RNA sequence: GGGAACGACUCGAGUAGAGUCGAAAAGGCCGAGACGGCGUUGUCGACGAAGGUGGCGAAAUCGUCGAACCGGAUGCGGUCCCUGAUCAAGGACCGCUCUGCGGCCACGCCGAUGCGGUGCGGAUCAAUUCGCUACUGUGUUCGCACAGUAGCGAAUAAAAGAAACAACAACAACAAC
Reactivity to DMS in 0.01 (KOAc 150mM, MgCl2 10mM, bicine 150mM(pH8.5), 24C), signal-to-noise 3, nucleotides 027 to 126: g020g000c000c020g010a160g020a120c020g000g010c040g020u000u000g020u010c010g010a020c030g000a030a050g010g010u000g000g010c000g030a060a170a030u000c010g030u000c000g000a020a300c040c000g000g000a040u010g020c010g010g000u000c000c000c000u010g000a070u000c170a220a190g000g000a010c000c000g000c000u000c000u010g000c090g010g050c300c160a040c050g010c010c000g030a040u010g030c020g000g000u000g010c090g000g020a090u010c050a110
Reactivity to 2A3 in 0.01 (KOAc 150mM, MgCl2 10mM, bicine 150mM(pH8.5), 24C), signal-to-noise 1, nucleotides 027 to 126: g050g000c000c000g020a020g010a040c020g010g050c000g020u010u000g060u000c020g020a140c020g010a070a010g000g030u030g030g000c010g070a190a080a130u180c020g030u020c020g020a040a030c000c010g010g030a020u160g040c000g000g000u020c000c010c000u060g030a080u100c040a020a010g000g000a000c010c000g000c000u010c010u050g020c010g070g000c040c020a000c040g000c010c000g000a060u180g010c020g000g090u070g180c070g020g010a070u040c010a020